[RMDB]
Chemical mapping of a 177-nucleotide RNA with DMS and 2A3. It was measured as part of the RMDB library OK1LIB. High DMS reactivity at an A or C suggests that its Watson-Crick edge is free.

RNA sequence: GGGAACGACUCGAGUAGAGUCGAAAAGUACAGCAGGUUCAGGUAAAACGAUGUUGCUGUCAUUCAUUGCCUGUAUGUUGCAGAAGUACAAUAACCCGACUACGUUUGCGGAAUCUGCCAGACAGAACCUCUUAGGAGCGUUCGCGCUCCUAAGAGGAAAAGAAACAACAACAACAAC
Reactivity to DMS in 0.01 (KOAc 150mM, MgCl2 10mM, bicine 150mM(pH8.5), 24C), signal-to-noise 1, nucleotides 027 to 126: g000u000a050c070a200g080c010a040g000g030u000u000c050a050g010g030u000a050a020a050a260c200g000a010u040g000u000u070g010c090u000g000u020c050a080u000u000c060a170u000u010g000c040c000u030g000u020a010u010g000u020u000g000c120a110g010a110a130g000u000a000c100a060a000u010a090a180c110c170c090g000a210c240u040a030c100g050u000u000u000g000c110g000g020a020a040u040c000u000g020c000c000a180g000a150c040a000g020a090a000
Reactivity to 2A3 in 0.01 (KOAc 150mM, MgCl2 10mM, bicine 150mM(pH8.5), 24C), signal-to-noise 2, nucleotides 027 to 126: g060u030a000c090a010g000c000a000g090g000u020u060c000a000g020g000u060a030a080a120a110c110g090a110u020g060u110u110g070c170u030g090u120c010a000u100u100c020a020u000u130g010c000c000u000g000u130a060u060g300u280u180g000c000a000g010a160a010g030u060a000c000a000a080u030a080a040c000c020c000g000a020c010u170a060c020g030u040u050u160g040c110g000g060a050a040u000c000u030g090c030c030a030g040a090c000a030g010a040a060